Structure probing data (2A3 and DMS) for a 177-nucleotide construct. Conditions: 150 mM KOAc, 10 mM MgCl2 and 150 mM bicine (pH 8.5), 24 C. The DMS profile rests on 1,032 reads. The data come from the RNA Mapping Database (RMDB), library OK2TST. The 2A3 profile rests on 1,032 reads. DMS adducts were read by reverse transcription with MarathonRT.

[RMDB]
RNA sequence: GGGAACGACUCGAGUAGAGUCGAAAAAACGCUCAAAAAUGCUGAGACUGAAAGAUGCAGAUUUCGAAGAAGACUCGCAGAACGAUGCAAAGUCGGCAGCGCUCAGCACGUGGAGUGCCGAAAGCACGCGCUAAGUGUUAUUCGUAACACUUAGCGCAAAAGAAACAACAACAACAAC
Reactivity to 2A3 in 0.01 (KOAc 150mM, MgCl2 10mM, bicine 150mM(pH8.5), 24C), signal-to-noise 1, nucleotides 027 to 126: a010a010c070g000c000u000c020a090a170a030a030a030u020g000c000u000g000a020g020a050c020u010g010a150a080a020g100a040u040g000c000a000g060a140u010u000u110c110g140a160a070g100a030a060g100a190c000u020c060g000c020a040g000a070a030c010g030a010u020g000c000a070a110a100g060u040c000g010g000c000a010g000c010g000c070u030c020a000g000c010a030c020g060u080g060g000a000g000u010g000c000c000g070a080a080a000g060c070a020c110
Reactivity to DMS in 0.01 (KOAc 150mM, MgCl2 10mM, bicine 150mM(pH8.5), 24C), signal-to-noise 2, nucleotides 027 to 126: a070a120c090g010c020u020c020a020a040a120a090a100u000g030c020u000g000a070g000a110c010u000g000a140a020a050g000a130u000g000c000a020g020a140u000u000u000c050g000a060a290g010a110a050g020a110c030u010c140g050c130a080g010a040a080c020g020a140u010g000c090a150a120a120g000u010c010g000g000c010a010g000c090g020c010u020c000a000g020c030a000c040g030u000g020g010a060g010u000g020c040c040g010a060a020a140g000c190a050c190